[RMDB]
RNA sequence: GGGAACGACUCGAGUAGAGUCGAAAAUACAAUGUCCACAACUGAAGUCACAUCAACAGUUGGAGGAGUGACUGUCGAGACCAAGGAGUCGGAAUCGGAAUCCGCGACAACAGUGAUCGGAGGAGGACAUCACGAGCACUUUCGAGUGCUCGUGAUGAAAAGAAACAACAACAACAAC
Reactivity to 2A3 in 0.01 (KOAc 150mM, MgCl2 10mM, bicine 150mM(pH8.5), 24C), signal-to-noise 1, nucleotides 027 to 126: u250a020c040a020a070u170g040u070c000c050a020c010a070a030c010u010g070a100a000g060u050c040a030c150a300u100c040a040a070c000a070g010u050u050g060g090a190g000g030a070g010u140g060a020c010u030g050u050c020g000a010g010a040c000c010a100a100g150g010a080g070u030c000g000g140a010a070u060c010g040g070a040a000u000c000c060g000c000g060a020c020a100a010c000a060g040u010g090a110u160c010g070g000a010g030g000a020g000g000a030
Reactivity to DMS in 0.01 (KOAc 150mM, MgCl2 10mM, bicine 150mM(pH8.5), 24C), signal-to-noise 2, nucleotides 027 to 126: u020a110c150a100a120u010g010u000c000c000a110c070a060a080c020u000g000a070a170g000u000c130a080c230a110u000c060a080a170c030a080g000u000u000g000g010a170g020g000a170g020u000g000a030c040u000g030u030c080g010a200g000a030c060c060a100a070g000g010a100g010u000c040g000g000a060a040u010c160g000g000a230a150u010c000c030g020c010g030a060c110a040a100c150a070g020u010g010a110u030c050g000g000a110g000g000a110g000g010a120